[RMDB]
RNA sequence: GGGAACGACUCGAGUAGAGUCGAAAACUUCUUCUUUGACGAUGCCUUGGUCCGAGGUGCGCAAUUACUUAGCGAUAAGACCUUCGCUCAAGAGCAACAAGCCAUUAUGGCUCGCGUGGAAGAAGACUGGUACAGUCGAUUUCGAUCGACUGUACCAAAAAGAAACAACAACAACAAC
Reactivity to DMS in 0.01 (KOAc 150mM, MgCl2 10mM, bicine 150mM(pH8.5), 24C), signal-to-noise 2, nucleotides 027 to 126: c010u000u000c010u000u000c000u000u010u000g030a070c000g000a270u000g030c020c000u000u000g010g010u000c050c070g000a000g000g010u000g000c060g010c040a130a110u010u020a110c300u010u000a150g010c000g000a120u030a120a130g010a070c040c050u020u000c300g000c020u000c030a020a000g000a120g000c010a100a300c160a110a070g000c010c000a200u020u000a170u010g000g000c000u000c060g020c000g020u000g000g010a000a020g000a010a020g020a090c250
Reactivity to 2A3 in 0.01 (KOAc 150mM, MgCl2 10mM, bicine 150mM(pH8.5), 24C), signal-to-noise 3, nucleotides 027 to 126: c000u000u020c000u020u030c020u060u060u240g100a080c000g050a050u090g000c000c000u020u010g000g010u060c050c040g030a010g070g010u060g000c000g000c030a020a110u130u060a190c110u150u170a020g010c000g010a020u030a160a090g120a080c010c000u020u030c010g000c010u000c010a020a000g060a030g010c010a030a070c010a080a020g000c020c000a140u300u240a160u300g030g020c020u000c020g050c010g010u030g030g000a000a000g000a010a000g000a010c070
The record gives the reactivity of an RNA of 177 nucleotides to DMS and 2A3. Conditions: 150 mM KOAc, 10 mM MgCl2 and 150 mM bicine (pH 8.5), 24 C. 2A3 adducts were read by reverse transcription with SuperScript II with manganese. Reactivities are given for positions 27 through 126. For DMS, 1,331 sequencing reads were counted.